[RMDB]
RNA sequence: GGGAACGACUCGAGUAGAGUCGAAAACCAUGCCGUUUGUCUGCCACGACGGUUACCCCGUUGGUCUGAGACUGGGCGUGGCCCAAGGUAUACCAACCGCGAAUCCUUCGUUCCUCGCUAGUCGGGUUAGUCCUAGUCUAAGAAAAGGUUAAAAGAGCGUUAUUCACUAGUUCGCUAGUGAAUAACGAAAAGAAACAACAACAACAAC
Reactivity to 2A3 in 0.01 (KOAc 150mM, MgCl2 10mM, bicine 150mM(pH8.5), 24C), signal-to-noise 8, nucleotides 027 to 156: c010c000a010u060g020c010c010g100u060u110u230g060u060c060u080g100c050c030a060c040g040a010c000g010g000u040u100a110c020c020c000c010g010u010u030g050g050u030c080u080g070a020g010a040c010u020g000g010g030c050g030u090g020g010c010c000c010a020a020g090g020u090a110u080a160c060c060a100a040c020c020g020c020g040a050a100u130c020c060u080u050c050g030u030u010c010c020u020c020g020c030u060a040g100u090c070g030g000g000u020u050a020g030u040c000c010u020a030g020u010c030u050a030a010g040a040a070a030a030g070g000u120u160a060a160a020a020g140a040g050
Reactivity to DMS in 0.01 (KOAc 150mM, MgCl2 10mM, bicine 150mM(pH8.5), 24C), signal-to-noise 2, nucleotides 027 to 156: c010c030a160u010g030c000c010g020u000u000u050g030u000c000u000g020c070c050a090c030g010a040c020g000g000u010u000a180c160c150c020c050g020u000u000g030g010u000c020u000g000a100g010a040c020u000g000g010g040c070g050u010g010g020c010c030c010a080a100g030g040u000a080u000a080c110c070a070a050c040c020g010c040g020a080a150u000c040c050u000u000c050g000u000u010c000c000u000c070g040c060u000a070g010u000c030g030g000g020u000u020a230g020u000c020c010u000a080g020u010c020u010a100a110g000a070a090a080a040g030g020u000u000a050a080a070a140g000a150g020
The record gives the reactivity of an RNA of 207 nucleotides to 2A3 and DMS. High 2A3 reactivity points to a flexible backbone, as in loops and unpaired stretches. The RNA was probed in 150 mM KOAc, 10 mM MgCl2 and 150 mM bicine (pH 8.5) at 24 C. The 2A3 profile rests on 8,254 reads. It was measured as part of the RMDB library OK3TST. For DMS the reverse transcriptase was MarathonRT.